Structure probing data (DMS and 2A3) for a 177-nucleotide construct. For 2A3 the reverse transcriptase was SuperScript II with manganese. Values are in units of 0.01, from 0 to 300, in steps of 10. The reactions ran in a buffer of 150 mM KOAc, 10 mM MgCl2 and 150 mM bicine (pH 8.5), at 24 C.
RNA sequence: GGGAACGACUCGAGUAGAGUCGAAAACCCUUCCCAUGAGUCCACACGGUAAGCGCCUCUGGCCCGAGGCCGCUCGUCGGGAAUCGGACACUGGAACUAGUACUCUGGUCAAUGCGGAUUGCCUGUGCAUACAGGGGCAGUUCGCUGCCCCUGUAUGAAAAGAAACAACAACAACAAC
Reactivity to DMS in 0.01 (KOAc 150mM, MgCl2 10mM, bicine 150mM(pH8.5), 24C), signal-to-noise 2, nucleotides 027 to 126: c010c010c010u000u000c000c000c000a140u010g000a130g010u000c030c030a090c080a150c120g000g000u000a070a070g020c050g020c010c010u000c040u030g010g020c060c060c070g000a030g000g020c050c020g010c020u010c070g020u000c040g020g000g010a110a080u000c160g010g010a070c040a090c060u000g000g020a070a080c100u000a060g000u000a080c090u010c020u010g000g020u010c060a110a060u000g010c030g000g000a120u000u000g020c020c010u010g000u010g010
Reactivity to 2A3 in 0.01 (KOAc 150mM, MgCl2 10mM, bicine 150mM(pH8.5), 24C), signal-to-noise 1, nucleotides 027 to 126: c000c020c000u000u000c060c010c000a120u150g080a020g030u000c020c010a030c020a040c130g000g030u020a010a070g040c070g000c020c000u090c010u050g120g040c070c040c040g040a000g000g000c000c020g030c000u010c020g120u060c010g030g000g050a010a090u120c040g040g000a030c070a010c080u070g020g020a100a050c030u000a080g050u080a080c030u010c060u140g060g000u030c040a040a100u080g000c000g030g040a090u040u060g000c040c000u030g030u030g050